[RMDB]
RNA sequence: GGGAACGACUCGAGUAGAGUCGAAAACUUUACACUAAAUUCUACUACACACAUGGACAAACACAACAGCAGAAAUGCCAGCAUAUAAAAUAAACCGAACCUCACUGAGGAUGUAGGUAUACCGAACUUCACUGAAGACGUAGGUAAAUCACUGCUACAUGGCCGUUUAAUUCGUUAAACGGCCAUGAAAAGAAACAACAACAACAAC
Reactivity to 2A3 in 0.01 (KOAc 150mM, MgCl2 10mM, bicine 150mM(pH8.5), 24C), signal-to-noise 2, nucleotides 027 to 156: c000u070u200u290a060c060a040c030u150a120a170a240u240u140c050u100a130c020u110a040c080a030c030a010c010a110u080g010g060a050c030a100a150a000c030a010c060a230a090c010a030g080c010a020g050a090a100a020u070g020c020c020a000g010c050a030u130a010u100a210a090a100a010u160a100a090a010c010c020g050a080a020c020c000u090c120a300c270u190g000a000g010g000a010u010g000u000a000g000g010u030a020u010a010c000c000g070a080a040c010u030u050c150a150c300u200g010a010a010g010a020c060g010u010a020g010g000u010a010a000a020u040c010a010c020u060g000c020u080a060